[RMDB]
RNA sequence: GGGAACGACUCGAGUAGAGUCGAAAAACUAGGAGGGCACAUCUCUCUAAGACUGUACGACAGUCUGUCUCUCUAGCACGCUUGUUCAACGAGAGAGAGAGAGCGUUGGAACAAGUGUGCAACGAAAAACUCCGAUAUAGUUCGCUAUAUCGGAGUUAAAAGAAACAACAACAACAAC
Reactivity to 2A3 in 0.01 (KOAc 150mM, MgCl2 10mM, bicine 150mM(pH8.5), 24C), signal-to-noise 6, nucleotides 027 to 126: a020c100u100a060g000g050a010g000g010g010c140a070c030a280u090c030u000c000u000c000u020a050a020g000a010c010u040g090u170a050c070g060a040c110a000g000u010c010u030g040u010c080u000c000u000c030u040a020g000c000a000c010g000c010u000u010g000u010u010c000a010a000c000g000a010g010a020g000a010g010a000g010a000g010a240g030c010g010u010u020g160g010a020a010c000a000a000g000u010g000u000g010c000a000a010c030g060a120a020a020
Reactivity to DMS in 0.01 (KOAc 150mM, MgCl2 10mM, bicine 150mM(pH8.5), 24C), signal-to-noise 6, nucleotides 027 to 126: a090c170u010a130g000g000a050g010g000g000c140a120c200a080u000c000u010c010u000c020u000a130a080g000a010c000u000g010u000a070c160g010a300c280a010g020u000c000u000g000u010c020u000c010u000c030u000a250g010c010a020c000g010c020u000u000g000u000u000c000a020a010c020g010a070g000a140g000a120g000a070g010a050g010a070g010c040g020u000u000g020g020a030a020c010a030a020g000u000g020u000g000c010a030a030c200g000a040a050a040

Structure probing data (2A3 and DMS) for a 177-nucleotide construct. The RNA was probed in 150 mM KOAc, 10 mM MgCl2 and 150 mM bicine (pH 8.5) at 24 C. For 2A3 the reverse transcriptase was SuperScript II with manganese. For DMS the reverse transcriptase was MarathonRT.